[RMDB]
RNA sequence: GGGAACGACUCGAGUAGAGUCGAAAAACGAUGAUGUUACCCCAUAAUGACCUGAGAGGUAUGAGGCGAUACCCGUAUUGAUUGUUGAGCGAAGCCGGCUUGCCGGUGGAGUGAUGCUUUCAGAGUGGAGAGUCGUGAUAUUCGUAUCACGACUCUCAAAAGAAACAACAACAACAAC
Reactivity to DMS in 0.01 (KOAc 150mM, MgCl2 10mM, bicine 150mM(pH8.5), 24C), signal-to-noise 2, nucleotides 027 to 126: a040c070g010a100u010g000a060u020g000u010u010a080c050c000c000c060a120u030a050a040u030g000a060c020c040u000g000a090g010a090g000g020u010a040u030g000a020g020g000c010g000a030u010a120c010c000c000g040u020a110u020u010g010a080u000u000g010u000u010g010a300g010c000g020a300a140g000c010c000g000g000c010u020u040g000c000c020g010g000u000g000g000a300g000u000g000a080u010g020c030u000u000u010c010a040g010a150g000u010g020
Reactivity to 2A3 in 0.01 (KOAc 150mM, MgCl2 10mM, bicine 150mM(pH8.5), 24C), signal-to-noise 2, nucleotides 027 to 126: a000c050g060a070u300g000a010u200g050u060u110a130c000c020c040c000a080u170a100a140u140g170a090c000c020u090g070a060g000a000g140g030u080a040u080g100a060g080g020c050g050a000u020a080c030c050c040g040u090a090u110u040g010a030u000u020g010u000u010g000a000g000c010g000a000a000g000c000c000g000g020c030u070u180g010c020c000g000g000u010g010g010a000g000u000g000a000u040g000c020u000u010u010c060a070g030a030g110u250g060

The record gives the reactivity of an RNA of 177 nucleotides to DMS and 2A3. The reactions ran in a buffer of 150 mM KOAc, 10 mM MgCl2 and 150 mM bicine (pH 8.5), at 24 C. The data come from the RNA Mapping Database (RMDB), libraries RFM100 and RFMREP.